The record gives the reactivity of an RNA of 177 nucleotides to 2A3 and DMS. For DMS the reverse transcriptase was MarathonRT. Conditions: 150 mM KOAc, 10 mM MgCl2 and 150 mM bicine (pH 8.5), 24 C.

[RMDB]
RNA sequence: GGGAACGACUCGAGUAGAGUCGAAAACACAUCAUUUGGUCGAAGUAGCUGUGCGUUUUGCAGCUCCAAGCGCUAUCAAGAAACGGCGUGGUAUUCAACUACGUGCGUCAAUGCGCAGUUUGAUAAGAUAGUUCGGUAGUUUCGACUACCGAACUAUAAAAGAAACAACAACAACAAC
Reactivity to 2A3 in 0.01 (KOAc 150mM, MgCl2 10mM, bicine 150mM(pH8.5), 24C), signal-to-noise 4, nucleotides 027 to 126: c050a010c010a040u110c020a060u010u050u220g090g020u070c070g070a160a020g030u150a000g010c000u000g020u060g110c060g090u090u020u170u240g000c000a000g000c000u000c010c000a040a030g020c000g000c010u060a060u190c070a070a020g050a090a080a000c020g030g000c020g000u010g000g020u060a140u180u250c040a140a060c020u020a010c000g060u090g270c010g030u030c000a060a070u070g000c000g000c000a000g000u040u160u160g070a080u040a050a130g070
Reactivity to DMS in 0.01 (KOAc 150mM, MgCl2 10mM, bicine 150mM(pH8.5), 24C), signal-to-noise 4, nucleotides 027 to 126: c030a120c140a070u020c110a060u010u030u000g000g020u000c090g010a090a060g030u000a020g020c000u020g010u030g030c300g010u020u020u000u000g010c060a010g000c020u010c060c090a070a130g000c020g020c000u030a100u040c230a080a100g000a100a110a060c000g010g000c000g020u010g000g010u000a110u050u030c250a110a010c020u000a010c000g000u000g010c000g030u000c020a080a060u020g000c040g000c020a100g020u020u000u020g010a070u000a070a150g000